Notes:
Structure probing data (2A3 and DMS) for a 177-nucleotide construct. Source: RMDB library M2PK50, as collected in RNAgym. The RNA was probed in 150 mM KOAc, 10 mM MgCl2 and 150 mM bicine (pH 8.5) at 24 C.
RNA sequence: GGGAACGACUCGAGUAGAGUCGAAAAAACCGUAAAUUCGUUUACGGUUAACCGCAACCGAGGCGAAAGGCAUUUUAUGCGUACGGUGGCGAAAGCCUAAAAUACCAUAGGCCUUCGGGCCUAUGAACAUUUCCACUGUAUUCGUACAGUGGAAAUGAAAAGAAACAACAACAACAAC
Reactivity to 2A3 in 0.01 (KOAc 150mM, MgCl2 10mM, bicine 150mM(pH8.5), 24C), signal-to-noise 4, nucleotides 027 to 126: a000a000c030c010g000u040a070a040a080u090u050c140g050u060u010u040a070c000g010g000u000u020a020a020c070c010g010c050a010a010c010c010g020a020g070g030c030g040a100a020a030g110g010c020a030u030u100u080u140a110u220g010c000g010u050a050c010g020g010u010g010g010c020g060a100a020a010g030c000c010u050a080a070a020a040u150a060c050c000a000u000a000g000g000c000c000u020u050c140g040g000g020c000c000u000a000u010g010a010a000
Reactivity to DMS in 0.01 (KOAc 150mM, MgCl2 10mM, bicine 150mM(pH8.5), 24C), signal-to-noise 5, nucleotides 027 to 126: a020a010c000c000g010u000a020a010a060u000u010c150g020u000u000u000a020c000g000g020u000u000a030a070c100c060g010c090a070a040c010c000g010a150g010g000c030g010a040a050a090g010g000c110a050u000u010u000u000a060u010g010c000g000u010a070c030g000g000u000g010g010c020g000a080a060a120g000c000c010u000a050a040a060a080u010a080c210c010a010u000a000g000g000c000c000u000u010c170g030g010g010c010c000u000a010u010g000a060a120